[RMDB]
RNA sequence: GGGAACGACUCGAGUAGAGUCGAAAAAAGCAAAGAAAGCAACGGGGCUAGCGAGUGGAUGUUCCGCCUCCCCGGAGUCCCGAGUGAGGCUUAUCCCGGGGAAUCCGGCCAAGUCCCGAAAUGUCUAACAGACUUAGGUUCGCCUAAGUCAAAAGAAACAACAACAACAAC
Reactivity to DMS in 0.01 (KOAc 150mM, MgCl2 10mM, bicine 150mM(pH8.5), 24C), signal-to-noise 9, nucleotides 027 to 129: a050a050g040c060a090a080a080g000a050a050a040g000c090a120a090c000g010g010g020g030c030u000a110g000c070g010a100g030u040g000g000a070u000g010u010u000c050c030g020c070c060u020c010c010c010c010g000g000a050g000u020c050c000c020g000a090g030u020g020a050g020g040c040u010u010a120u040c030c000c000g030g000g010g000a020a020u030c030c020g010g020c070c050a050a050g010u000c000c000c020g000a030a020a040u060g000u050c020u000a090a080c190a110
Reactivity to 2A3 in 0.01 (KOAc 150mM, MgCl2 10mM, bicine 150mM(pH8.5), 24C), signal-to-noise 9, nucleotides 027 to 129: a000a000g150c180a130a070a040g120a090a090a010g070c030a050a070c020g000g000g000g000c010u020a020g030c030g080a050g040u120g040g030a070u060g100u210u050c030c040g060c010c020u020c000c000c000c000g000g010a030g040u060c000c000c010g010a030g040u220g030a070g040g010c020u060u090a060u130c000c000c000g000g000g000g010a040a050u030c030c000g030g020c020c020a060a010g010u000c000c000c000g010a020a050a020u110g010u000c010u030a030a040c040a080
Chemical mapping of a 170-nucleotide RNA with DMS and 2A3. The 2A3 profile rests on 59,097 reads. Reactivities are given for positions 27 through 129. DMS adducts were read by reverse transcription with MarathonRT. 2A3 adducts were read by reverse transcription with SuperScript II with manganese.